[RMDB]
RNA sequence: GGGAACGACUCGAGUAGAGUCGAAAAGUGAUGUGCGACAGUUUGUACCUGAGGCCGGAUAGGUACUUACUGGAGGCUGCUUUGCGGUCGAGUCGUAUGACCGGCCAUAUGCGACGAGCACAUCUGAGGCGGCGUCGGUGUUCGCAUCGAUGUUGCCAAAAGAAACAACAACAACAAC
Reactivity to 2A3 in 0.01 (KOAc 150mM, MgCl2 10mM, bicine 150mM(pH8.5), 24C), signal-to-noise 9, nucleotides 027 to 126: g190u090g010a010u000g000u010g000c010g020a010c010a010g000u000u010u010g010u010a010c000c010u100g150a070g060g000c010c010g010g000a100u240a210g000g000u000a000c000u000u000a000c000u000g010g020a040g020g010c000u000g000c030u090u160u300g030c020g010g000u010c010g030a060g030u020c010g010u100a080u100g030a020c000c000g000g000c000c000a050u080a040u180g060c030g010a010c010g010a030g010c000a000c000a000u000c010u010g030a030
Reactivity to DMS in 0.01 (KOAc 150mM, MgCl2 10mM, bicine 150mM(pH8.5), 24C), signal-to-noise 9, nucleotides 027 to 126: g010u020g000a000u000g020u000g010c010g000a200c010a010g010u000u000u000g000u000a000c000c000u000g010a120g000g000c000c010g000g000a150u040a020g010g010u000a000c000u000u000a000c000u000g010g000a130g000g010c010u010g000c010u030u020u040g010c010g000g020u000c000g010a180g010u000c010g020u020a070u020g010a050c010c010g000g000c010c010a070u030a020u030g010c020g010a030c040g000a170g010c000a010c000a010u000c000u000g000a160